Source: RMDB library OK1LIB, as collected in RNAgym. An RNA of 177 nucleotides, treated with DMS and 2A3 and read out base by base. The reactions ran in a buffer of 150 mM KOAc, 10 mM MgCl2 and 150 mM bicine (pH 8.5), at 24 C. Values are in units of 0.01, from 0 to 300, in steps of 10. For 2A3 the reverse transcriptase was SuperScript II with manganese.
RNA sequence: GGGAACGACUCGAGUAGAGUCGAAAAACAGCUUUGAUAUCAGGAGAGGGAGACGACAGUGUGGUAAUUUACAACAAGUAGUUAUUGCACUAAAUGUGCAUAAUUUAUAUUGAUGUGAAUUUAAACGGCCACGCAUUAUAUUCGUAUAAUGCGUGGCAAAAGAAACAACAACAACAAC
Reactivity to DMS in 0.01 (KOAc 150mM, MgCl2 10mM, bicine 150mM(pH8.5), 24C), signal-to-noise 2, nucleotides 027 to 126: a060c060a070g000c120u010u010u000g000a050u010a090u010c100a050g020g010a060g000a040g000g000g000a010g010a050c090g020a060c100a080g000u010g000u000g010g060u070a000a000u020u040u030a000c000a010a070c020a020a010g040u000a000g000u000u000a020u050u040g030c000a000c000u010a000a050a050u050g000u000g000c010a000u000a000a000u000u030u020a000u010a100u000u010g000a140u000g000u000g000a010a030u000u020u000a090a070a130c150g020
Reactivity to 2A3 in 0.01 (KOAc 150mM, MgCl2 10mM, bicine 150mM(pH8.5), 24C), signal-to-noise 6, nucleotides 027 to 126: a000c030a010g010c030u150u090u070g100a060u120a050u120c020a030g030g020a040g020a030g040g040g010a050g000a010c030g020a000c010a020g060u040g000u040g130g040u030a020a000u010u010u000a010c010a070a000c000a010a010g000u000a010g000u040u010a070u100u260g010c000a010c000u120a160a110a130u280g010u010g000c000a000u000a000a000u020u170u050a110u090a130u050u000g020a080u030g010u000g010a000a000u020u050u090a200a180a020c040g100